[RMDB]
RNA sequence: GGGAACGACUCGAGUAGAGUCGAAAAGCAGUUCCAGAGUGUGAGGACUCUGAACUGGAAGGUAGAUGACCUCCUCACAGGUCAAAGUGAUAUUGAUAGGCAAGUAUCAGGAUCACACUACCGACAUACUUGUCUAUGUCAACUCCAGGAACUGAGAGACUCGUGAUUAUUUCGAUAAUCACGAGUCAAAAGAAACAACAACAACAAC
Reactivity to DMS in 0.01 (KOAc 150mM, MgCl2 10mM, bicine 150mM(pH8.5), 24C), signal-to-noise 2, nucleotides 027 to 156: g030c000a030g020u010u000c030c000a060g030a070g020u000g010u010g000a120g030g000a140c050u000c030u000g010a130a070c050u000g000g030a130a120g000g040u010a080g030a300u000g020a100c020c020u000c010c030u000c110a220c030a080g000g000u020c030a010a090a110g000u000g010a050u000a080u000u000g000a050u000a040g020g030c100a050a110g030u000a030u000c020a180g010g010a130u000c090a120c100a210c090u000a100c010c020g020a080c220a070u010a020c020u000u000g000u000c010u000a010u000g010u000c040a050a060c040u000c050c020a140g020g010a040a050c030u000g010a090g000a230
Reactivity to 2A3 in 0.01 (KOAc 150mM, MgCl2 10mM, bicine 150mM(pH8.5), 24C), signal-to-noise 5, nucleotides 027 to 156: g060c010a000g000u020u000c040c010a000g000a010g020u070g000u030g020a040g000g030a010c020u000c010u080g030a090a080c040u030g040g040a060a040g050g010u100a050g000a240u090g040a050c000c010u000c010c010u030c010a040c020a010g010g020u040c040a060a060a060g060u080g070a040u060a050u190u110g040a010u010a010g040g020c030a030a010g040u010a010u040c070a050g020g040a050u100c060a040c020a040c140u110a070c010c000g000a010c020a020u020a000c000u020u060g010u030c010u000a010u030g010u010c020a020a040c040u000c010c020a010g000g030a030a030c010u010g010a020g000a020

Chemical mapping of a 207-nucleotide RNA with DMS and 2A3. The data come from the RNA Mapping Database (RMDB), library OK3TST. The DMS profile rests on 2,945 reads. Reactivities are given for positions 27 through 156. The RNA was probed in 150 mM KOAc, 10 mM MgCl2 and 150 mM bicine (pH 8.5) at 24 C.